[RMDB]
RNA sequence: GGGAACGACUCGAGUAGAGUCGAAAACGAUUUUCUCCGGCAGCAGCUCCGGGAUCACCAGAUACCAGGUAAAGAAUUGCACAAUCAACGGCACGUUGCGGAACAGUUCGACAUACAACGUACCCAGAAAGACUAUUGUUUUCGAACAAUAGUCUUUAAAAGAAACAACAACAACAAC
Reactivity to DMS in 0.01 (KOAc 150mM, MgCl2 10mM, bicine 150mM(pH8.5), 24C), signal-to-noise 9, nucleotides 027 to 126: c100g010a130u000u010u000u000c030u000c010c050g010g030c080a080g020c090a080g010c090u000c040c030g010g010g010a050u010c050a090c070c070a080g000a110u010a070c040c020a060g010g010u010a050a080a100g000a050a050u000u000g010c050a070c090a100a080u010c070a050a070c100g010g010c080a040c070g010u000u000g010c060g000g000a060a100c100a060g000u000u000c040g010a060c070a100u000a070c070a050a080c040g010u000a090c010c000c050a190g010
Reactivity to 2A3 in 0.01 (KOAc 150mM, MgCl2 10mM, bicine 150mM(pH8.5), 24C), signal-to-noise 4, nucleotides 027 to 126: c020g040a040u070u030u110u070c070u010c030c000g030g030c010a050g020c010a020g020c050u010c020c000g030g000g020a020u040c020a010c050c010a010g010a080u040a080c020c030a040g000g060u100a080a100a020g070a080a110u090u110g020c050a020c030a090a090u130c040a050a070c020g030g000c040a000c070g030u040u030g000c030g030g020a040a020c020a040g030u060u040c000g020a020c010a040u110a020c010a060a010c030g030u040a050c000c010c000a040g140
Source: RMDB library OK2TRN, as collected in RNAgym.
This 177-nucleotide RNA was probed chemically with DMS and 2A3.
Conditions: 150 mM KOAc, 10 mM MgCl2 and 150 mM bicine (pH 8.5), 24 C.
2A3 adducts were read by reverse transcription with SuperScript II with manganese.
For DMS the reverse transcriptase was MarathonRT.